[RMDB]
RNA sequence: GGGAACGACUCGAGUAGAGUCGAAAAGACGUGGAGGUUCCGCGCCCUCCUUUGCGCGUAAGUACGUCGAAAUUCGGUGCUUUGGAUCGCACCGUUCGAUCCAUUUGAUAUCCGCUUGGUGCCGCGGUUGGGCAUUUACACUUACCCGAAAGGGGAAGCCAUUUAGUCCUUUCGAGGACUAAAUGGCAAAAGAAACAACAACAACAAC
Reactivity to 2A3 in 0.01 (KOAc 150mM, MgCl2 10mM, bicine 150mM(pH8.5), 24C), signal-to-noise 1, nucleotides 027 to 156: g050a010c010g030u030g020g040a000g070g060u200u000c070c000g040c000g000c010c000c010u030c000c020u010u060u060g010c000g000c010g000u000a050a020g050u030a010c020g010u000c010g040a140a000a050u150u120c010g000g000u000g010c000u000u100u050g020g000a000u060c070g000c000a130c080c010g000u040u010c000g000a000u030c020c000a110u080u040u140g100a120u040a060u100c000c000g010c070u060u170g080g050u070g040c020c000g110c100g050g000u120u040g070g010g000c020a020u170u000u020a040c080a010c050u000u130a020c000c010c010g020a090a060a020g000g010g000g000a000a010
The record gives the reactivity of an RNA of 207 nucleotides to 2A3. It was measured as part of the RMDB library OK3TST.